An RNA of 177 nucleotides, treated with 2A3 and DMS and read out base by base. For DMS, 1,053 sequencing reads were counted. Reactivities are rounded to 0.1 and cut off at 0 and 3.
RNA sequence: GGGAACGACUCGAGUAGAGUCGAAAAAAAACCUCUGAAAUUCUUUCAAUAUUGGACCUUGGACAUAUCAUAGUUCCGAAUCGAAUCUCUUUAGAAAGAAGAUCUUUUGUCUCAUGGUAGCCUGCUCCGGUUAGUAUUAGUUCGCUAAUACUAACCGAAAAGAAACAACAACAACAAC
Reactivity to 2A3 in 0.01 (KOAc 150mM, MgCl2 10mM, bicine 150mM(pH8.5), 24C), signal-to-noise 2, nucleotides 027 to 126: a040a000a000a000c070c000u000c060u110g120a290a300a230u120u040c060u030u150u040c120a200a050u080a120u230u130g080g020a050c060c000u030u050g000g010a000c010a020u160a070u290c050a060u120a170g040u150u050c040c020g050a060a080u040c020g000a020a080u020c070u020c000u210u120u070a100g020a000a080a010g010a040a000g020a020u000c050u050u070u080u120g030u030c010u000c070a020u060g040g000u020a030g010c020c010u030g000c040u010c050
Reactivity to DMS in 0.01 (KOAc 150mM, MgCl2 10mM, bicine 150mM(pH8.5), 24C), signal-to-noise 2, nucleotides 027 to 126: a110a060a120a090c030c010u000c130u000g000a050a080a190u000u000c010u000u000u000c040a080a080u000a020u010u000g000g020a080c080c000u000u010g020g020a060c050a110u010a060u020c170a080u020a150g000u000u010c020c020g000a060a060u000c060g000a040a090u010c090u010c040u000u000u000a170g010a020a050a050g000a040a050g010a130u000c030u010u010u010u000g000u010c030u000c020a050u010g000g000u000a090g020c040c020u000g010c090u020c060